[RMDB]
RNA sequence: GGGAACGACUCGAGUAGAGUCGAAAAGAACUUUGGCCAGCUCGGAAUAGAAUCAGGGGGUGCAAACUGCCCACUGGCAGAAAGGAUUAUAGCAAAUGCGUACCCUAUUGCAAUACAGCCCGGCCAACAUAGACUACUCUAUUCGUAGAGUAGUCAAGUAUAGUAAUGAAUUCGUUCAUUACUAUACAAAAGAAACAACAACAACAAC
Reactivity to DMS in 0.01 (KOAc 150mM, MgCl2 10mM, bicine 150mM(pH8.5), 24C), signal-to-noise 3, nucleotides 027 to 156: g000a090a090c060u000u010u000g010g010c020c030a140g000c020u000c060g010g010a220a180u010a110g020a110a090u010c060a060g000g000g010g030g020u010g020c060a020a090a180c090u000g020c020c010c080a120c100u010g030g030c030a050g020a240a100a080g020g010a200u000u000a060u010a110g020c050a050a070a090u000g000c030g020u000a070c020c000c010u000a130u000u020g010c050a080a160u010a110c060a070g000c020c040c040g000g000c020c000a020a020c120a120u000a160g010a050c020u000a010c000u000c000u000a060u000u000c220g010u010a030g000a040g010u000a000g000u000c010a000a060
Reactivity to 2A3 in 0.01 (KOAc 150mM, MgCl2 10mM, bicine 150mM(pH8.5), 24C), signal-to-noise 7, nucleotides 027 to 156: g030a060a020c030u050u030u010g010g000c010c010a000g000c030u060c120g060g040a130a090u160a160g060a070a060u190c080a110g020g000g010g000g000u070g010c010a040a080a090c020u030g000c000c010c060a140c150u140g010g000c020a010g050a020a070a010g100g050a050u160u150a110u230a150g060c070a050a090a080u080g000c010g030u090a080c000c020c000u060a100u030u090g050c030a030a050u040a130c020a020g020c030c020c030g000g000c010c000a000a000c010a030u120a020g000a000c000u000a000c000u000c000u000a020u060u040c110g090u040a000g000a000g000u000a000g000u000c000a000a000